[RMDB]
RNA sequence: GGGAACGACUCGAGUAGAGUCGAAAACAGCAACAGGAUCAGCAAUUUAGAAAAGAAGUAGGCUCUCUUUAAGAGAGCAAGCCUCUGAAUCUAGGCCGAGGAUCAGGGUUCCUACUGACAAGGGCAGGCAGUAAGUGCACAGCCCCUGUGGCAGAGCACAGAACCAAUCUUUCGAGAUUGGUUCUGUAAAAGAAACAACAACAACAAC
Reactivity to 2A3 in 0.01 (KOAc 150mM, MgCl2 10mM, bicine 150mM(pH8.5), 24C), signal-to-noise 1, nucleotides 027 to 156: c010a000g040c020a000a020c000a060g060g040a060u090c030a010g060c020a110a090u060u140u130a110g030a040a090a010a030g040a030a010g020u060a040g050g110c000u020c010u020c020u120u300u260a180a050g020a010g000a000g000c000a000a000g010c000c010u030c030u070g080a140a140u030c020u050a040g090g000c040c010g060a050g040g010a020u030c030a010g000g000g040u020u060c020c010u040a080c010u040g000a030c010a060a030g020g000g020c000a030g090g000c010a000g030u230a220a060g070u050g060c060a020c020a110g010c000c000c000c000u030g030u070g080g000c030a020g010a010g070c040
Reactivity to DMS in 0.01 (KOAc 150mM, MgCl2 10mM, bicine 150mM(pH8.5), 24C), signal-to-noise 2, nucleotides 027 to 156: c030a110g000c030a070a120c030a070g000g000a070u000c020a110g010c020a050a100u000u020u000a060g010a050a080a240a050g030a060a040g010u000a150g000g010c000u000c000u010c000u000u000u010a120a140g010a040g000a020g020c010a010a050g020c020c010u010c010u010g010a100a170u000c030u000a060g020g010c000c040g030a190g010g000a090u000c030a080g000g010g030u020u010c020c000u000a040c040u000g000a040c030a080a040g000g050g070c050a140g010g030c040a060g010u000a050a130g020u010g020c010a020c080a170g010c000c010c010c010u010g010u000g010g020c020a070g020a150g040c140